[RMDB]
RNA sequence: GGGAACGACUCGAGUAGAGUCGAAAAUCCACUAUGAAUCUAGUCACUAAAUAAACACAAUUCGCUACUGUGUGUAAUAGUGAGUGUUGAUAACACAAAAUAAUAGUAUAGUUUUGGAAGAUUAUACGCGCCCUUGCUCCGUUCGCGGAGCAAGGAAGGAUUUUAUACUGUUCGCAGUAUAAAAUCCAAAAGAAACAACAACAACAAC
Reactivity to DMS in 0.01 (KOAc 150mM, MgCl2 10mM, bicine 150mM(pH8.5), 24C), signal-to-noise 2, nucleotides 027 to 156: u000c010c010a110c110u010a160u000g010a120a080u000c050u010a140g030u000c000a040c010u000a000a010a120u000a130a180a020c000a030c000a040a030u020u010c300g050c200u000a050c010u030g020u000g030u000g020u000a130a300u000a030g010u000g010a090g060u010g010u040u000g000a070u000a050a150c070a090c030a070a060a040a150u000a070a300u000a070g010u000a050u000a070g020u000u000u000u010g040g030a180a130g010a030u010u000a030u010a020c010g010c060g040c090c000c000u010u010g010c000u000c000c010g030u000u000c300g040c040g050g020a000g040c010a000a000g020g130a020a060
Reactivity to 2A3 in 0.01 (KOAc 150mM, MgCl2 10mM, bicine 150mM(pH8.5), 24C), signal-to-noise 5, nucleotides 027 to 156: u020c030c000a060c100u220a200u250g130a110a050u070c110u110a070g120u050c010a010c010u010a020a020a070u050a000a050a000c000a000c000a000a130u200u140c090g030c120u200a090c080u040g000u000g000u000g000u020a000a040u000a020g000u000g030a030g000u030g010u030u060g090a150u220a290a030c040a010c030a020a150a040a060u220a110a080u090a130g020u020a020u010a040g010u020u020u120u190g100g050a120a060g010a060u040u040a020u050a050c040g030c000g050c070c010c020u000u000g000c000u000c000c000g020u050u050c120g000c010g110g000a000g000c000a000a000g000g000a000a000
The record gives the reactivity of an RNA of 207 nucleotides to DMS and 2A3. The RNA was probed in 150 mM KOAc, 10 mM MgCl2 and 150 mM bicine (pH 8.5) at 24 C.